[RMDB]
RNA sequence: GGGAACGACUCGAGUAGAGUCGAAAAGCGGACAAGGUUAGUAGCGAAGCGCACUAUAGCGACGGCCAUCGUUGUAGGUAGCAGAACUACUGAGUACGCUACUUGAUACGUGAAUCGCCACACGUUAGGGGUUGUAUGAGUUCGCUCAUACAACCCCAAAAGAAACAACAACAACAAC
Reactivity to 2A3 in 0.01 (KOAc 150mM, MgCl2 10mM, bicine 150mM(pH8.5), 24C), signal-to-noise 3, nucleotides 027 to 126: g000c010g020g080a030c080a120a080g160g090u150u150a000g040u030a030g000c010g010a030a010g040c010g000c060a000c020u000a030u020a010g000c020g050a010c040g140g000c020c010a010u040c020g000u000u000g020u000a000g000g050u070a050g010c000a000g000a060a010c000u030a000c010u050g010a030g040u010a030c000g080c030u050a070c040u120u160g070a080u060a140c000g010u010g080a050a030u130c040g010c030c000a000c010a000c020g020u070u100a060
Reactivity to DMS in 0.01 (KOAc 150mM, MgCl2 10mM, bicine 150mM(pH8.5), 24C), signal-to-noise 1, nucleotides 027 to 126: g030c000g000g000a010c010a140a140g050g000u030u060a020g030u000a000g060c010g070a300a120g030c000g000c150a300c070u000a110u070a030g000c000g070a050c020g000g000c070c050a220u000c000g020u010u000g030u000a030g000g100u000a300g000c040a010g000a300a180c000u030a040c100u000g000a180g040u000a080c050g030c020u000a050c160u000u000g000a030u080a000c050g050u000g000a040a000u000c090g000c120c210a080c050a000c040g000u000u080a120